[RMDB]
RNA sequence: GGGAACGACUCGAGUAGAGUCGAAAACUGUUGCGGCCUUAGGACAACCUAUGUGUGUGUACGGUGACUCAGACUCUUCGAGGGCGCUAUAAUCAUGUCGUACCGUGCACGUCAAUCUGAGUUGCCCCGGCCGGUACUCAUUCGUGAGUACCGGCCGAAAAGAAACAACAACAACAAC
Reactivity to 2A3 in 0.01 (KOAc 150mM, MgCl2 10mM, bicine 150mM(pH8.5), 24C), signal-to-noise 1, nucleotides 027 to 126: c160u120g060u090u000g050c060g030g000c020c020u020u210a010g000g000a080c020a080a140c000c000u060a150u080g040u000g010u000g000u000g000u030a010c040g060g000u080g000a000c020u010c000a030g100a020c110u000c030u070u160c180g030a140g030g010g000c000g020c050u150a060u110a120a140u300c180a040u160g070u040c030g120u100a020c000c000g030u020g090c000a000c000g010u050c000a000a020u070c080u010g000a030g220u000u000g060c010c000c000

An RNA of 177 nucleotides, treated with 2A3 and read out base by base. The RNA was probed in 150 mM KOAc, 10 mM MgCl2 and 150 mM bicine (pH 8.5) at 24 C. The 2A3 profile rests on 313 reads. 2A3 adducts were read by reverse transcription with SuperScript II with manganese.